[RMDB]
RNA sequence: GGGAACGACUCGAGUAGAGUCGAAAAAUUGGGUUCACACCCCCAGGCCGCGGGCCGGCUACUCUUCUUUCUCUUUCGUCGUCAUCCCUGGCCAGCCUCCGGAGUUCCUCUUCUUCCUCUCGGCUGAAAAGAGACAUGUUCGCAUGUCUCAAAAGAAACAACAACAACAAC
Reactivity to 2A3 in 0.01 (KOAc 150mM, MgCl2 10mM, bicine 150mM(pH8.5), 24C), signal-to-noise 9, nucleotides 027 to 129: a000u100u090g020g000g010u130u110c070a040c010a030c090c010c000c000c020a050g040g010c020c010g080c070g030g040g030c030c010g010g010c010u070a070c010u020c010u100u020c000u030u180u020c030u000c000u040u100u080c050g030u010c010g020u010c030a080u060c040c000c000u010g030g000c010c010a020g010c020c010u030c010c010g030g010a050g010u050u040c010c000u040c000u080u010c000u070u020c010c000u010c000u010c010g030g010c030u050g030a050a040a020a030
Reactivity to DMS in 0.01 (KOAc 150mM, MgCl2 10mM, bicine 150mM(pH8.5), 24C), signal-to-noise 9, nucleotides 027 to 129: a080u070u050g010g020g000u020u030c090a080c140a210c090c030c000c040c050a110g000g030c060c020g040c130g020g020g020c050c010g040g000c040u010a080c070u000c020u040u010c020u020u070u020c000u000c020u020u030u010c040g010u000c050g030u010c060a100u040c010c010c010u030g000g030c060c070a090g010c050c020u020c040c030g020g030a090g010u000u030c010c020u030c010u010u010c050u040u020c040c000u000c030u000c010g000g040c000u010g000a070a060a070a120
Chemical mapping of a 170-nucleotide RNA with 2A3 and DMS.
Conditions: 150 mM KOAc, 10 mM MgCl2 and 150 mM bicine (pH 8.5), 24 C.
DMS adducts were read by reverse transcription with MarathonRT.
The data come from the RNA Mapping Database (RMDB), library 15KLIB.